Structure probing data (2A3 and DMS) for a 177-nucleotide construct.
RNA sequence: GGGAACGACUCGAGUAGAGUCGAAAAUACAAAUGCGUGGUGGAGCUGAUGGUCGAAGGAGUGCUUACGCAAAUGAGGAUGGUUGUAUGCAUACAGAAAAGGAUUGUACAUGAGACAUCGCACUCGGAGGUAGCAGUAAUUUCGAUUACUGCUACCUAAAAGAAACAACAACAACAAC
Reactivity to 2A3 in 0.01 (KOAc 150mM, MgCl2 10mM, bicine 150mM(pH8.5), 24C), signal-to-noise 3, nucleotides 027 to 126: u140a000c030a030a090a030u140g080c060g010u080g000g040u040g060g010a020g030c040u050g030a070u080g040g020u040c030g010a020a030g050g010a030g030u040g030c010u090u060a050c070g000c050a010a090a120u190g010a060g060g020a030u070g120g000u070u040g030u080a030u080g030c010a010u060a120c000a020g170a040a120a030a010g080g010a030u040u070g030u060a020c010a070u080g010a010g030a050c020a070u060c040g000c040a030c000u010c000g040g050
Reactivity to DMS in 0.01 (KOAc 150mM, MgCl2 10mM, bicine 150mM(pH8.5), 24C), signal-to-noise 5, nucleotides 027 to 126: u010a100c120a060a090a090u000g010c080g030u000g000g040u010g000g000a140g010c050u010g010a070u010g010g010u000c100g010a090a070g010g010a070g010u010g000c050u010u000a060c170g030c070a040a070a110u010g010a070g020g010a050u000g010g010u000u000g020u000a050u000g000c080a060u010a080c090a060g010a040a060a080a100g000g000a070u000u000g020u000a030c070a070u000g000a090g000a060c080a050u000c060g030c100a080c030u000c040g010g020

Source information
For DMS the reverse transcriptase was MarathonRT. The DMS profile rests on 5,659 reads. High 2A3 reactivity points to a flexible backbone, as in loops and unpaired stretches.